[RMDB]
RNA sequence: GGGAACGACUCGAGUAGAGUCGAAAAAUUGUAGUUUGAAGAUGUGCUCUUUUGAGCAGUCUCAACUUUGCUCGUUCCCGUUAUGGGAAAAAUUUUGGAAGGUCUUGGUAGGAACGGGUGGAUCUUAAAUACCGGAAGGCUUCGGCCUUCCGGUAUUAAAAGAAACAACAACAACAAC
Reactivity to 2A3 in 0.01 (KOAc 150mM, MgCl2 10mM, bicine 150mM(pH8.5), 24C), signal-to-noise 1, nucleotides 027 to 126: a010u080u050g010u010a000g020u000u030u060g060a110a030g020a130u160g100u000g300c000u000c080u150u240u190u300g000a000g000c000a000g050u000c000u000c000a000a000c000u100u210u080g010c000u000c010g040u040u000c000c000c000g070u190u080a290u210g040g030g000a080a000a000a000a000u200u190u040u160g010g010a040a020g070g000u070c060u200u050g060g000u130a000g000g070a030a040c000g000g000g000u000g080g000a000u000c000u010u000a000
The record gives the reactivity of an RNA of 177 nucleotides to 2A3. 2A3 adducts were read by reverse transcription with SuperScript II with manganese. Conditions: 150 mM KOAc, 10 mM MgCl2 and 150 mM bicine (pH 8.5), 24 C.